[RMDB]
RNA sequence: GGGAACGACUCGAGUAGAGUCGAAAAAGCGAUACGCUAUUUUCAGCGAGCCUUAGCCGUUGAUCCAGACGAUGUGGCUAUUUUAAAUGGAUUAGGCGUUACGCAUAGAGAGCUGAUGCGUUAUGAGGCUGCAUGCGUGGUUCGCCACGCAUGCAGCAAAAGAAACAACAACAACAAC
Reactivity to DMS in 0.01 (KOAc 150mM, MgCl2 10mM, bicine 150mM(pH8.5), 24C), signal-to-noise 1, nucleotides 027 to 126: a050g010c010g020a200u020a130c100g010c010u010a120u010u000u000u030c040a110g010c000g010a120g020c030c080u000u020a140g000c000c000g000u030u000g020a050u030c080c070a030g000a220c220g000a050u000g010u010g040g000c090u000a070u000u000u000u020a020a070a140u020g000g000a020u000u000a150g000g000c010g010u020u010a080c020g060c010a000u000a060g000a300g000a090g010c060u010g010a040u000g000c030g030u000u000a140u010g000a070g000
Reactivity to 2A3 in 0.01 (KOAc 150mM, MgCl2 10mM, bicine 150mM(pH8.5), 24C), signal-to-noise 2, nucleotides 027 to 126: a000g120c100g030a110u120a170c020g000c020u030a140u090u160u070u140c040a020g040c060g040a010g010c000c020u020u050a010g020c010c000g010u020u190g040a080u020c000c010a040g020a120c100g040a080u100g000u050g220g020c050u040a100u050u130u010u140a080a120a100u030g000g020a060u050u020a100g020g020c000g020u030u110a000c000g000c030a000u080a040g140a000g040a010g040c090u110g030a010u040g000c020g030u020u000a110u180g040a000g090
Conditions: 150 mM KOAc, 10 mM MgCl2 and 150 mM bicine (pH 8.5), 24 C.
This 177-nucleotide RNA was probed chemically with DMS and 2A3.
Reactivities are given for positions 27 through 126.
It was measured as part of the RMDB library OK2TST.